[RMDB]
RNA sequence: GGGAACGACUCGAGUAGAGUCGAAAAUACUGCAGCCACUUACGAUAUGAACUUAGUCUGAAGGCCCACACCCUAUUGUGGCUGGUAUAACCUUCAUUGACCUUGGAAGAUGUCUUUGACUAAUAGACGUGUAGUCUCCUUUCGAGGAGACUACACGAAAAGAAACAACAACAACAAC
Reactivity to DMS in 0.01 (KOAc 150mM, MgCl2 10mM, bicine 150mM(pH8.5), 24C), signal-to-noise 2, nucleotides 027 to 126: u000a000c030u000g020c000a000g080c000c000a000c020u000u000a110c180g020a150u020a130u020g010a090a070c150u000u000a110g010u010c080u000g010a050a040g020g000c050c000c090a070c200a110c070c030c050u000a070u010u000g020u000g010g010c050u000g000g000u000a010u000a090a260c040c020u000u000c030a120u000u020g010a070c010c020u000u000g050g000a130a060g000a050u000g010u000c010u020u000u000g000a100c180u030a020a040u000a030g020a230
Reactivity to 2A3 in 0.01 (KOAc 150mM, MgCl2 10mM, bicine 150mM(pH8.5), 24C), signal-to-noise 1, nucleotides 027 to 126: u100a030c060u040g120c000a000g010c010c000a000c040u100u120a050c050g100a090u060a060u300g030a120a050c020u090u010a030g080u000c060u110g080a060a020g020g030c050c030c000a030c000a050c020c000c000u070a080u130u140g020u020g020g000c010u020g020g040u080a020u010a040a040c000c000u000u060c010a060u000u090g010a020c000c030u000u050g000g040a040a010g030a090u050g020u010c000u020u020u040g030a020c030u040a050a130u100a160g110a100
Chemical mapping of a 177-nucleotide RNA with DMS and 2A3.
For DMS the reverse transcriptase was MarathonRT.
It was measured as part of the RMDB library OK2TRN.